[RMDB]
RNA sequence: GGGAACGACUCGAGUAGAGUCGAAAACGCUGCGCGUUCGCUGCGGAGUUCGUCUCGCGCGGCGACCACCCGCGGGUGUACGUACACACUGCGGACACAGCGCGAGAAAGCGCCGGCCCGGCGAAGGGCUAUAAAUGCUAUUCGUAGCAUUUAUAGCAAAAGAAACAACAACAACAAC
Reactivity to 2A3 in 0.01 (KOAc 150mM, MgCl2 10mM, bicine 150mM(pH8.5), 24C), signal-to-noise 9, nucleotides 027 to 126: c030g010c030u070g010c050g010c030g080u100u060c010g000c020u020g010c020g030g010a030g020u120u170c210g180u080c070u000c010g300c000g000c000g020g010c010g010a010c000c020a040c010c000c000g000c010g000g040g000u030g010u060a130c180g170u300a010c010a000c020a020c050u020g000c000g000g030a010c050a000c010a040g020c010g000c010g010a050g100a080a110a010g050c010g000c010c010g040g030c000c010c000g000g010c040g030a070a070g090g040
Reactivity to DMS in 0.01 (KOAc 150mM, MgCl2 10mM, bicine 150mM(pH8.5), 24C), signal-to-noise 9, nucleotides 027 to 126: c030g010c020u010g010c050g010c110g010u020u010c010g010c000u000g010c010g000g000a020g000u010u030c160g000u050c000u000c010g000c000g000c000g000g010c020g000a040c240c110a160c140c010c000g000c000g000g000g010u000g010u010a090c300g010u050a060c040a030c040a100c040u000g010c000g000g000a230c100a090c110a080g010c000g010c030g010a090g010a070a100a080g010c020g010c010c030g010g010c010c020c010g020g000c080g010a130a120g010g010